[RMDB]
RNA sequence: GGGAACGACUCGAGUAGAGUCGAAAAUUAUUGUGGGAUUGUAGUUUACUAAGUAAUUCAUCUCUGAAUCCUGAUAAAUCAUGCAUAUCAUUGAUACAACUACGCAGUAAACUAGUAGGAAUACAAAUAUCUGGAUAUGUACGUAAAUAGUCGAUUAUAAAGAAGAAACUUUCGAGUUUCUUCUUUAAAAAGAAACAACAACAACAAC
Reactivity to DMS in 0.01 (KOAc 150mM, MgCl2 10mM, bicine 150mM(pH8.5), 24C), signal-to-noise 1, nucleotides 027 to 156: u010u010a030u000u000g000u010g010g000g000a090u000u000g010u010a050g010u000u000u000a080c020u000a110a100g020u000a030a060u010u000c030a090u020c070u010c140u010g020a040a030u000c030c020u020g000a100u000a040a050a150u010c020a040u000g000c010a050u000a060u000c010a120u010u000g010a110u010a010c060a040a110c010u010a000c000g000c070a100g020u010a050a050a100c060u010a070g010u000a020g000g040a200a110u020a120c110a070a080a130u000a020u000c050u000g020g010a060u000a050u010g010u000a040c060g020u000a020a070a090u000a160g010u000c030g000a140u000u000a210